[RMDB]
RNA sequence: GGGAACGACUCGAGUAGAGUCGAAAACACUUUGUAGCAAAGAUCACCUUUCUUUCAUUGUGCAAUGGCAUAUUUCUCAUUUGCCUCUGACAGCUCAUAAAAAUGGAGCUUCCUGUCCAUAUUUCUAGUGUCAUUCUGUUCAAAAUUGCAUAGAUUAAUCCUAUAGGUGAUUCGUCACCUAUAGGAUAAAAGAAACAACAACAACAAC
Reactivity to DMS in 0.01 (KOAc 150mM, MgCl2 10mM, bicine 150mM(pH8.5), 24C), signal-to-noise 3, nucleotides 027 to 156: c050a020c040u000u010u000g020u000a110g010c060a070a070a080g010a120u000c070a140c080c040u000u000u000c030u000u020u000c070a130u000u000g010u010g030c000a070a080u000g020g010c030a070u000a090u000u000u000c050u000c060a210u000u010u000g020c010c010u000c040u010g000a070c080a090g020c020u000c020a080u010a020a050a060a130a090u000g000g000a050g000c040u000u000c040c080u000g000u000c010c000a080u000a070u000u000u010c040u000a100g020u000g010u000c030a070u000u000c020u000g000u010u010c080a050a050a080a080u000u000g000c020a100u000a130g010a160u000u000a120
Reactivity to 2A3 in 0.01 (KOAc 150mM, MgCl2 10mM, bicine 150mM(pH8.5), 24C), signal-to-noise 7, nucleotides 027 to 156: c040a010c030u070u070u090g090u090a060g020c090a050a050a030g040a100u100c040a090c050c000u040u080u040c020u030u120u070c050a070u040u080g010u020g000c030a040a090u070g010g020c020a020u030a080u060u160u030c090u010c030a040u060u050u060g010c010c010u050c040u030g030a030c030a030g000c020u030c050a050u140a090a110a050a020a040u110g020g000a000g030c000u020u030c010c020u050g060u000c010c010a030u050a070u130u080u030c060u050a040g040u010g030u040c010a050u080u030c050u050g100u100u100c040a050a090a070a060u100u050g020c020a030u080a040g190a030u300u300a070